[RMDB]
RNA sequence: GGGAACGACUCGAGUAGAGUCGAAAAGCACGUGGGUUCAGAUGAUGGGCCCGCAUCUGUACGAAAGUGAGACGAAAGUCCAGCCGACGUGCAUGAGCACGCGGGCCCCGUGCUCACCAGCAAAAGACCCGGCCAUUAAUUUCGAUUAAUGGCCGGGAAAAGAAACAACAACAACAAC
Reactivity to 2A3 in 0.01 (KOAc 150mM, MgCl2 10mM, bicine 150mM(pH8.5), 24C), signal-to-noise 1, nucleotides 027 to 126: g000c000a020c090g000u080g080g080g040u100u180c130a080g010a080u040g030a020u040g050g000g010c000c000c000g010c000a040u000c000u010g070u050a050c100g050a120a000a000g040u050g010a160g030a090c020g050a080a070a000g000u000c020c010a010g010c000c000g040a000c000g020u010g010c000a010u110g010a000g000c030a000c050g000c090g000g000g000c000c000c030c000g000u020g000c020u010c000a010c000c050a000g120c100a000a130a000a030g050a010